[RMDB]
RNA sequence: GGGAACGACUCGAGUAGAGUCGAAAAAUGGGUCAAAGGCACGACUACCUUGUUGCAUGACCAUCGCAAUAUCUUUACCACGGUACUUUUUCCGUUGCGAUUCAGAUAAUGACAACAUUGAUGUACCGGACGUAGGGAAAUUCGUUUCCCUACGUCCAAAAGAAACAACAACAACAAC
Reactivity to 2A3 in 0.01 (KOAc 150mM, MgCl2 10mM, bicine 150mM(pH8.5), 24C), signal-to-noise 5, nucleotides 027 to 126: a020u060g050g000g000u030c050a060a070a110g200g010c030a010c060g060a020c050u120a110c040c020u060u090g080u100u030g000c050a040u040g020a020c020c010a010u050c020g000c000a000a060u030a070u170c040u060u140u070a090c070c050a030c030g050g000u050a060c050u110u240u060u060u020c040c040g020u010u030g020c040g090a110u050u060c030a000g040a110u130a140a080u140g070a050c010a050a000c020a060u040u160g040a050u120g060u060a050c050c000
Reactivity to DMS in 0.01 (KOAc 150mM, MgCl2 10mM, bicine 150mM(pH8.5), 24C), signal-to-noise 4, nucleotides 027 to 126: a080u010g010g010g010u000c030a050a100a090g010g000c050a070c090g020a140c160u020a160c150c110u000u010g010u000u000g010c040a180u000g000a060c050c030a060u010c070g010c040a050a090u000a040u000c020u000u010u000a120c110c070a090c080g020g000u000a030c130u000u000u000u000u020c050c080g020u000u000g010c040g000a050u000u000c090a030g000a080u030a070a090u020g000a050c040a020a100c080a040u000u000g010a070u010g010u010a020c070c030